[RMDB]
RNA sequence: GGGAACGACUCGAGUAGAGUCGAAAACACAAUCUCCGACGGAGUGUAUGGAUCCACUUUCUUUGUGGCUACAGGGUUUCACGGGUUGCACGUAAUCAUCGGAUCUACUUUCCUAGCAGUAUGCUUACUACGACAACUAAAAUUCCACUUCACAUCCCUGAUAAGUGGCGUUCGCGCCACUUAUCAGAAAAGAAACAACAACAACAAC
Reactivity to 2A3 in 0.01 (KOAc 150mM, MgCl2 10mM, bicine 150mM(pH8.5), 24C), signal-to-noise 2, nucleotides 027 to 156: c080a000c020a040a050u070c040u010c030c030g110a070c090g050g000a020g020u090g030u060a140u190g050g020a060u040c000c030a080c050u070u180u120c090u100u060u190g050u010g050g000c000u060a040c070a070g110g050g000u020u040u100c080a010c080g050g000g000u010u050g010c040a030c040g010u090a000a060u060c090a010u030c040g090g000a040u000c000u040a110c000u080u070u090c000c000u040a030g020c040a030g030u100a000u110g030c020u020u030a010c020u020a040c050g090a060c030a100a000c010u150a000a000a000a150u040u040c000c000a080c000u000u020c000a030c040a110u040c010c040